[RMDB]
An RNA of 207 nucleotides, treated with DMS and read out base by base. Conditions: 150 mM KOAc, 10 mM MgCl2 and 150 mM bicine (pH 8.5), 24 C. Values cover nucleotides 27 to 156.
RNA sequence: GGGAACGACUCGAGUAGAGUCGAAAAUGGGCCGUGUGCUUAACCAGGACAAGAUCUCCUUCUCUCCAACGUUGUUGCCAACUCAAGAUUCUCCUAACCUGUGCUUGGAGAGACGUGGACCCAGAGUAAAACGAAGGGUGCUUCGGCACCCUUCGAAUCUAUGAAUUAGCUUCGGCUAAUUCAUAGAAAAAGAAACAACAACAACAAC
Reactivity to DMS in 0.01 (KOAc 150mM, MgCl2 10mM, bicine 150mM(pH8.5), 24C), signal-to-noise 1, nucleotides 027 to 156: u000g000g000g070c020c020g010u020g020u000g000c100u010u000a070a100c050c030a100g020g020a250c040a080a120g010a210u000c060u000c030c030u000u000c000u000c000u000c030c020a050a080c110g030u000u010g000u020u000g000c010c080a060a080c060u000c000a050a100g000a150u000u000c010u030c040c020u020a080a150c020c040u000g010u000g000c050u010u000g000g020a110g000a050g020a040c090g000u010g020g040a070c000c000c000a230g010a130g010u020a060a060a090a180c000g010a000a020g000g020g050u000g010c000u000u010c230g050g020c000a000c000c000c000u010u010c010g000a020a040